Chemical mapping of a 177-nucleotide RNA with 2A3 and DMS. 2A3 adducts were read by reverse transcription with SuperScript II with manganese. For 2A3, 1,625 sequencing reads were counted. DMS adducts were read by reverse transcription with MarathonRT. The reactions ran in a buffer of 150 mM KOAc, 10 mM MgCl2 and 150 mM bicine (pH 8.5), at 24 C.

[RMDB]
RNA sequence: GGGAACGACUCGAGUAGAGUCGAAAAAUGCCGACCCGAAGAGGAAAGAAGGACUCGGACGCGAACCCGUGAGUGGAAACCUCGUUCUUUAUUGGGGAGUACACUCGAGGAGUGGAAGGCGGGGAGGGAUAUGUCUAGGGUUCGCCCUAGACAUAUCAAAAGAAACAACAACAACAAC
Reactivity to 2A3 in 0.01 (KOAc 150mM, MgCl2 10mM, bicine 150mM(pH8.5), 24C), signal-to-noise 2, nucleotides 027 to 126: a020u080g030c000c010g050a020c000c020c030g010a080a000g040a020g070g030a150a040a060g050a030a050g040g010a020c030u040c060g000g050a010c000g060c050g090a030a050c010c000c030g070u110g020a020g000u030g000g000a030a000a000c010c010u030c050g090u200u060c100u150u300u140a170u130u120g000g000g010g020a000g000u010a010c000a000c010u000c010g020a050g020g020a060g000u110g010g010a090a060g040g030c030g020g000g000g000a040g000g020
Reactivity to DMS in 0.01 (KOAc 150mM, MgCl2 10mM, bicine 150mM(pH8.5), 24C), signal-to-noise 3, nucleotides 027 to 126: a050u010g010c050c010g000a150c060c030c060g000a150a130g000a120g010g000a070a130a070g010a150a040g000g000a070c100u000c080g010g010a090c090g000c040g010a070a050c040c000c050g040u000g000a030g020u000g010g000a180a180a240c000c000u000c090g000u010u020c240u000u000u000a060u030u000g000g010g010g000a060g020u010a070c000a020c000u000c000g010a130g010g010a130g010u000g010g020a050a130g000g020c080g020g000g010g000a040g010g000